[RMDB]
RNA sequence: GGGAACGACUCGAGUAGAGUCGAAAAUAGAGAAAUCAACGUCUUUAAUAGCCAACAAACUUAUUGUUUACUUGGGUGCCAGGUAUAGAGCUAAGUAUGUUACAUUCAUUAUUUACAUUUAAUAUUCACACCAACUCUAACAUUACCCACAUUUUAAGCCGCAUUAUAUCUUCGGAUAUAAUGCGGCAAAAGAAACAACAACAACAAC
Reactivity to 2A3 in 0.01 (KOAc 150mM, MgCl2 10mM, bicine 150mM(pH8.5), 24C), signal-to-noise 1, nucleotides 027 to 156: u040a000g070a000g050a110a050a020u120c050a150a040c010g060u000c000u030u130u040a100a100u040a070g020c080c000a000a070c120a050a210a140c000u170u100a190u170u000g070u050u040u060a110c020u000u020g000g000g040u040g030c000c000a000g040g040u000a070u040a100g050a000g000c000u020a110a000g050u160a040u050g000u040u110a050c110a120u050u110c000a050u030u240a070u080u160u060a020c000a000u010u090u120a120a190u230a120u160u230c070a120c000a020c060c080a020a000c000u000c020u020a000a000c000a000u010u010a050c000c050c000a000c000a040u150u280u000u000a000a080